Chemical mapping of a 207-nucleotide RNA with 2A3.

RNA sequence: GGGAACGACUCGAGUAGAGUCGAAAAGGGGUCACAGGGAGGACGCUUACAACAGCUAUACUGAAGCCUCCACGGUAUAGACAUGUUGGCGUCCGUUGAUCUGUGACGGAGGCACCCGCGCGGUUUAUGAACCAUGUUCGCAUGGUUCAUAAACCAAUCACAUUGCGAGAUUCGUCUCGCAAUGUGAAAAAGAAACAACAACAACAAC
Reactivity to 2A3 in 0.01 (KOAc 150mM, MgCl2 10mM, bicine 150mM(pH8.5), 24C), signal-to-noise 1, nucleotides 027 to 156: g090g020g010g000u010c010a010c000a000g010g010g000a010g000g000a010c000g000c010u080u120a050c020a250a100c070a250g120c000u000a010u000a000c000u050g040a110a040g010c000c000u010c000c000a000c010g000g010u020a000u000a000g150a140c140a250u050g030u040u060g030g000c050g020u030c070c010g010u030u000g010a010u000c000u010g000u000g010a000c000g010g000a000g030g000c010a040c030c000c000g080c030g000c140g040g000u010u000u000a000u000g000a000a000c000c000a000u000g080u020u090c300g000c150a010u000g000g010u000u000c000a000u000a000a030a000c000c000a000a000
For 2A3 the reverse transcriptase was SuperScript II with manganese. Reactivities are given for positions 27 through 156. The data come from the RNA Mapping Database (RMDB), library RNAMAK. Conditions: 150 mM KOAc, 10 mM MgCl2 and 150 mM bicine (pH 8.5), 24 C.